[RMDB]
RNA sequence: GGGAACGACUCGAGUAGAGUCGAAAAGCCGAUGAAUUGCCGAGAAGCCUGGCUCGAAAUCGUCGACGCAUCGACGACGGUCCUGCCAUGAGACCGUAACGAAGACAUGUCGCCUCGAAUGGCGUCGUAUAACAUGAGUGGUUCGCCACUCAUGUAAUCAUUUUUCCGUCUUCGGACGGAAAAAUGAAAAAGAAACAACAACAACAAC
Reactivity to 2A3 in 0.01 (KOAc 150mM, MgCl2 10mM, bicine 150mM(pH8.5), 24C), signal-to-noise 1, nucleotides 027 to 156: g000c000c000g010a010u090g050a000a250u180u220g060c030c060g040a030g060a030a040g030c010c000u070g040g000c000u000c020g000a000a040a090u050c050g000u030c010g010a000c070g000c100a140u030c010g040a080c040g000a000c000g000g000u000c010c010u040g190c000c050a160u090g010a010g020a160c000c000g000u030a020a050c040g010a130a000g000a020c010a050u070g000u030c000g000c060c000u080c210g020a060a130u150g000g000c010g000u020c000g000u110a150u030a120a040c000a000u000g000a000g000u000g100g010u090u110c210g070c030c000a000c000u010c000a000u000g000u000a000a000
Conditions: 150 mM KOAc, 10 mM MgCl2 and 150 mM bicine (pH 8.5), 24 C. This 207-nucleotide RNA was probed chemically with 2A3.